[RMDB]
RNA sequence: GGGAACGACUCGAGUAGAGUCGAAAACAAUGAGGAUACCUCGUGGGUUAAUGUGACAGCUUGGUACGGAAGACCAGCUAGUAGUGGUGAAUCCACAGACUUUGGAACUGGUGCAUACCGAAGAAUGAUCAACUCAACGGUUCGCCGUUGAGUUGAUAAAAGAAACAACAACAACAAC
Reactivity to 2A3 in 0.01 (KOAc 150mM, MgCl2 10mM, bicine 150mM(pH8.5), 24C), signal-to-noise 4, nucleotides 027 to 126: c020a000a110u230g030a010g080g030a100u140a240c020c000u060c040g010u060g010g040g020u080u190a140a090u160g020u080g080a000c030a020g010c010u100u080g070g000u060a060c030g010g050a060a000g020a010c000c000a000g000c010u020a110g020u010a000g010u010g110g040u080g120a030a080u090c000c000a010c000a000g090a040c000u100u040u100g070g010a070a070c000u000g010g000u060g010c040a010u060a070c010c020g040a030a020g010a040a070u140g020
Reactivity to DMS in 0.01 (KOAc 150mM, MgCl2 10mM, bicine 150mM(pH8.5), 24C), signal-to-noise 2, nucleotides 027 to 126: c150a080a070u120g000a030g020g040a170u030a080c040c010u000c050g020u010g010g000g000u000u000a060a170u020g000u030g000a150c040a060g000c000u000u000g000g020u020a100c070g020g000a140a220g010a070c070c020a000g000c050u020a050g000u000a120g010u000g000g000u000g020a160a150u000c000c010a030c000a030g010a040c050u030u000u000g010g060a040a100c060u000g010g000u060g000c030a070u000a090c000c010g000a090a060g040a100a040u000g000